An RNA of 207 nucleotides, treated with DMS and 2A3 and read out base by base. The DMS profile rests on 1,838 reads. The reactions ran in a buffer of 150 mM KOAc, 10 mM MgCl2 and 150 mM bicine (pH 8.5), at 24 C. Reactivities are given for positions 27 through 156. For DMS the reverse transcriptase was MarathonRT. It was measured as part of the RMDB library RSTRND.
RNA sequence: GGGAACGACUCGAGUAGAGUCGAAAAGCAGUACGUUGUGGACGAAGCGGCUAAAACUUACACAACUCGCCCAAAGCACCCUGCCCUUCGGGUCGCUGAGGGUUAACUUAAUAGAAACGGCUAAGCAUGUAGUACCGACAGCGGAGUACUGGCGGACGUAGUAGGCACAGUUCGCUGUGCCUACUACAAAAGAAACAACAACAACAAC
Reactivity to DMS in 0.01 (KOAc 150mM, MgCl2 10mM, bicine 150mM(pH8.5), 24C), signal-to-noise 1, nucleotides 027 to 156: g030c040a100g020u020a080c090g030u010u000g030u030g030g000a080c070g040a050a100g070c060g020g020c050u000a060a030a070a010c070u000u010a110c090a070c040a090a040c070u020c080g040c000c010c010a050a300a050g020c020a030c000c010c010u000g000c050c140c040u020u010c050g030g000g010u010c100g080c030u000g000a300g000g000g040u000u010a020a030c110u000u010a090a130u030a050g000a050a010a050c080g000g000c090u010a020a090g020c040a080u000g030u000a020g000u000a140c020c000g000a030c030a020g020c030g050g020a190g010u000a070c000u000g000g040c010g030g020a050c120
Reactivity to 2A3 in 0.01 (KOAc 150mM, MgCl2 10mM, bicine 150mM(pH8.5), 24C), signal-to-noise 4, nucleotides 027 to 156: g090c040a010g090u100a030c070g010u040u030g030u040g050g040a030c040g070a080a030g030c010g080g000c010u070a050a080a070a110c080u140u170a020c040a010c000a040a100c040u090c130g020c000c010c010a000a000a000g000c000a000c000c000c010u030g030c040c000c010u040u040c030g010g000g020u040c070g000c010u010g000a020g000g000g000u000u000a020a010c000u030u080a000a020u030a040g070a030a030a020c040g020g000c030u070a070a080g050c020a040u130g010u050a020g040u020a150c020c050g010a020c020a020g030c050g030g050a060g030u070a040c000u040g050g010c020g000g000a020c060